[RMDB]
RNA sequence: GGGAACGACUCGAGUAGAGUCGAAAACACAUUCUAUUCGUAGAAUGUGGAACGUAGAGAGAUCCACAGCGUCGCAGCUAUGUCGAACGAGGAAGAGCGCGCAGGGAUCGGGCUUCGGCCCGAUCAACCAAUUAGUAGAUUUCGAUCUACUAAUUGGAAAAGAAACAACAACAACAAC
Reactivity to DMS in 0.01 (KOAc 150mM, MgCl2 10mM, bicine 150mM(pH8.5), 24C), signal-to-noise 9, nucleotides 027 to 126: c000a000c000a010u000u000c000u000a020u000u010c170g020u000a010g000a010a000u000g010u000g000g000a060a060c100g010u000a060g000a120g010a120g000a090u000c020c030a090c100a100g000c040g010u000c070g020c060a080g010c040u000a050u010g010u000c060g010a050a120c120g010a090g010g000a060a050g000a080g010c020g010c050g010c080a100g010g000g000a010u000c000g010g000g020c000u000u010c200g020g010c000c000c000g000a000u000c010a080a160
Reactivity to 2A3 in 0.01 (KOAc 150mM, MgCl2 10mM, bicine 150mM(pH8.5), 24C), signal-to-noise 9, nucleotides 027 to 126: c000a000c000a000u000u000c000u020a020u040u090c180g100u030a000g000a010a000u000g000u010g010g030a070a030c040g100u190a030g040a010g010a010g010a180u030c020c020a050c020a070g030c020g120u170c060g010c050a100g020c040u110a080u220g120u120c050g060a120a130c060g020a080g080g050a080a050g020a010g030c030g000c010g000c040a030g090g090g000a000u000c000g000g010g000c020u080u090c210g110g000c000c000c020g000a000u000c000a000a030
The data come from the RNA Mapping Database (RMDB), library M2PK50. This 177-nucleotide RNA was probed chemically with DMS and 2A3. DMS adducts were read by reverse transcription with MarathonRT. The RNA was probed in 150 mM KOAc, 10 mM MgCl2 and 150 mM bicine (pH 8.5) at 24 C. For 2A3, 22,245 sequencing reads were counted.